Source information
Structure probing data (2A3) for a 177-nucleotide construct. For 2A3, 702 sequencing reads were counted. Reactivities are given for positions 27 through 126. High 2A3 reactivity points to a flexible backbone, as in loops and unpaired stretches.
RNA sequence: GGGAACGACUCGAGUAGAGUCGAAAACGAUUUAGCCAUGCUAGUUGCACGAGUUUAGACUCGUAGCAGAUAGCUCAGUAACACGUGGCCAAACUACCCUCUGGAUCGGGAUAACCUCGGGAAACUGCUACGCAGCUCCAUUCGUGGAGCUGCGUAGAAAAGAAACAACAACAACAAC
Reactivity to 2A3 in 0.01 (KOAc 150mM, MgCl2 10mM, bicine 150mM(pH8.5), 24C), signal-to-noise 2, nucleotides 027 to 126: c010g020a040u000u080u220a000g030c000c000a000u020g000c020u040a030g040u100u050g040c030a010c020g010a000g000u170u100u210a170g060a010c000u000c000g030u070a180g000c000a000g050a150u010a000g000c040u020c140a020g010u050a100a070c040a030c220g050u020g050g000c000c000a110a080a020c020u180a090c010c010c000u000c070u090g040g000a070u070c020g000g020g000a010u070a040a040c010c000u000c030g010g000g000a000a000a000c040u050g010